[RMDB]
RNA sequence: GGGAACGACUCGAGUAGAGUCGAAAACUAAAGUACUGGGAAGACCAGCACGGUACAGCCGGCCCGUACCGGUCGUUUGCUGGCAAACCUCAUGCUGCGAAGUGAGUCUAGGGCUCGAGUAGGCUGCCUCCCCACCAGAAUUCGUUCUGGUGGGGAGAAAAGAAACAACAACAACAAC
Reactivity to 2A3 in 0.01 (KOAc 150mM, MgCl2 10mM, bicine 150mM(pH8.5), 24C), signal-to-noise 3, nucleotides 027 to 126: c030u060a070a040a030g050u050a050c120u060g020g020g010a140a050g070a150c000c000a000g000c010a000c000g040g010u050a040c060a020g030c040c010g000g000c020c080c070g040u090a080c000c010g040g070u070c010g020u060u200u200g040c000u040g000g010c000a050a040a080c000c000u070c010a020u060g000c010u020g010c070g060a070a000g050u060g130a020g010u020c060u100a150g120g010g010c000u000c030g000a030g020u080a060g120g000c050u050g040c040
Reactivity to DMS in 0.01 (KOAc 150mM, MgCl2 10mM, bicine 150mM(pH8.5), 24C), signal-to-noise 1, nucleotides 027 to 126: c000u000a080a070a140g020u000a060c140u000g000g010g000a070a120g000a030c000c000a000g010c000a050c220g000g000u070a010c180a130g010c000c030g010g000c010c100c190g020u020a050c000c010g010g010u000c160g000u050u000u010g010c000u010g000g000c010a100a190a130c040c000u020c050a020u000g000c000u000g050c200g050a010a030g000u030g000a120g020u000c030u010a120g000g000g000c050u000c010g000a080g010u000a030g000g000c020u000g000c140